[RMDB]
RNA sequence: GGGAACGACUCGAGUAGAGUCGAAAACCCAGCCUAGGGUGAUGUUGGCGGCAAGUGUGUGGUUGUGUCUGUCUCCAUUUGCUGUUGACAUCAGCCCCAGGCUUGCAAACGUCGUGUUCGCACGACGCCCCUGUUGUCAGUUCGCUGACAACAGGGGAAAAGAAACAACAACAACAAC
Reactivity to 2A3 in 0.01 (KOAc 150mM, MgCl2 10mM, bicine 150mM(pH8.5), 24C), signal-to-noise 2, nucleotides 027 to 126: c000c010c000a010g010c000c000u010a020g020g040g030u010g020a010u000g020u000u010g040g000c030g000g020c000a010a000g010u030g010u070g030u050g080g100u090u090g140u110g110u130c130u140g030u030c000u030c000c010a010u000u010u000g000c000u000g010u030u000g010a000c000a010u000c010a010g060c020c000c000c010a000g000g000c010u000u040g020c060a100a080a010c020g010u010c010g000u010g040u090u100c200g030c060a010c000g000a010c010g020
Conditions: 150 mM KOAc, 10 mM MgCl2 and 150 mM bicine (pH 8.5), 24 C. The record gives the reactivity of an RNA of 177 nucleotides to 2A3. Reactivities are given for positions 27 through 126.